[RMDB]
RNA sequence: GGGAACGACUCGAGUAGAGUCGAAAAUGAGGUGUGAGAUGUGUCAAAUGCAUUUCUCUCUAACAUUGAGCUGUGAUGGGGAAGCAACUACGGUUGCGAACUCUCUGAUGUCACACUGCCAAGAAAAGCUUCUAGCGUAAAGUCAUAUCUACCCGUAGGGAAAAUAUAGCUUCGGCUAUAUUUUCCCAAAAGAAACAACAACAACAAC
Reactivity to 2A3 in 0.01 (KOAc 150mM, MgCl2 10mM, bicine 150mM(pH8.5), 24C), signal-to-noise 2, nucleotides 027 to 156: u080g000a030g020g010u050g000u040g040a020g000a020u030g040u010g040u080c090a040a040a080u160g010c020a000u000u050u010c040u000c000u000c010u010a100a020c020a120u070u120g040a030g020c050u020g040u020g010a020u060g020g010g000g000a050a040g000c020a010a000c000u010a000c130g080g000u000u000g020c000g020a070a060c020u010c000u010c040u050g090a120u190g090u030c000a000c010a000c040u050g010c000c010a020a040g090a070a070a010a010g010c000u070u040c080u160a050g010c030g050u060a050a030a020g030u070c000a040u060a050u100c000u070a080c000c000c000g080u080a050
Reactivity to DMS in 0.01 (KOAc 150mM, MgCl2 10mM, bicine 150mM(pH8.5), 24C), signal-to-noise 1, nucleotides 027 to 156: u010g010a160g020g050u000g000u000g000a080g000a010u030g000u000g010u000c110a090a110a160u010g000c050a050u000u010u000c010u000c010u000c010u020a070a130c100a210u010u010g040a130g000c000u000g010u000g010a100u000g050g030g020g030a130a300g000c050a010a040c000u000a050c160g130g010u000u000g030c010g000a020a160c000u000c000u000c070u010g000a130u010g010u000c000a010c010a070c070u010g010c030c040a030a100g010a060a070a110a100g000c000u000u010c060u000a070g010c060g000u000a100a070a160g000u000c070a070u010a140u000c060u000a130c010c010c030g000u000a230